[RMDB]
RNA sequence: GGGAACGACUCGAGUAGAGUCGAAAAGGGAACAAUGGUGCGAAGUGAAGGUAAAUGACAUGCAGAAGGAGUUCCGUGGACUCUGUGCCUAUUUGUCAAAGCACAAGUCAGCGAAGACAUGUAUUCCGGCAUUAAUGGGUUUCGACCCAUUAAUGCCAAAAGAAACAACAACAACAAC
Reactivity to 2A3 in 0.01 (KOAc 150mM, MgCl2 10mM, bicine 150mM(pH8.5), 24C), signal-to-noise 1, nucleotides 027 to 126: g060g000g010a110a000c030a020a010u080g010g000u050g040c000g040a140a070g040u060g130a080a020g080g060u080a070a080a040u090g000a040c010a010u020g000c030a030g030a070a020g020g010a050g020u080u000c100c020g000u060g020g030a000c000u040c060u020g000u020g030c010c000u110a150u010u090u080g160u120c030a020a090a040g020c000a010c010a010a000g010u070c020a000g040c010g050a080a010g010a000c030a020u130g020u070a120u060u100c090c160
Reactivity to DMS in 0.01 (KOAc 150mM, MgCl2 10mM, bicine 150mM(pH8.5), 24C), signal-to-noise 2, nucleotides 027 to 126: g010g000g000a070a070c210a090a010u000g030g040u010g000c020g020a040a110g000u010g010a050a060g000g030u020a060a100a070u010g000a050c060a050u000g000c020a070g010a050a080g000g010a100g010u000u000c060c070g030u010g010g000a010c020u000c180u000g050u000g000c030c050u000a140u020u000u030g000u010c110a040a110a170g000c030a010c030a010a070g000u000c030a110g020c050g000a140a070g010a080c070a050u010g000u000a070u000u000c040c100